An RNA of 177 nucleotides, treated with 2A3 and DMS and read out base by base. It was measured as part of the RMDB library OK1LIB. High DMS reactivity at an A or C suggests that its Watson-Crick edge is free. For DMS the reverse transcriptase was MarathonRT. The RNA was probed in 150 mM KOAc, 10 mM MgCl2 and 150 mM bicine (pH 8.5) at 24 C.
[RMDB]
RNA sequence: GGGAACGACUCGAGUAGAGUCGAAAAGGUGGCUCCUUCUCACGUGAGGGAUGACGUCAUCGGGAGUCACCGAUUUAGCAUGUUCGUCCUACUUAUCUACGCAGAUGCGUGUAGGACGUUCAUGCGAGGGAUCGUUUACCUUCGGGUAGACGAUCCCAAAAGAAACAACAACAACAAC
Reactivity to 2A3 in 0.01 (KOAc 150mM, MgCl2 10mM, bicine 150mM(pH8.5), 24C), signal-to-noise 9, nucleotides 027 to 126: g000g000u000g000g000c010u000c010c000u080u050c040u030c030a040c030g060u090g120a220g050g210g020a070u180g060a020c020g060u080c030a070u110c050g010g000g000a000g000u000c000a000c000c000g000a000u000u010u030a010g000c000a000u000g000u000u000c000g000u000c010c000u000a010c020u150u200a110u120c090u100a030c040g000c050a050g050a300u250g050c020g020u040g010u010a000g000g000a000c000g000u000u000c000a000u000g000c000g000a110
Reactivity to DMS in 0.01 (KOAc 150mM, MgCl2 10mM, bicine 150mM(pH8.5), 24C), signal-to-noise 5, nucleotides 027 to 126: g020g000u000g000g000c000u000c000c000u010u030c140u020c270a170c140g000u030g010a060g030g040g010a080u020g000a140c040g000u010c110a030u030c100g000g000g000a030g000u000c000a010c000c000g010a020u020u020u040a150g020c000a010u000g000u000u000c000g000u020c010c000u020a010c010u010u050a090u030c220u050a070c100g040c080a200g020a070u040g000c130g030u000g000u000a000g000g000a000c000g020u000u000c000a000u000g010c010g000a090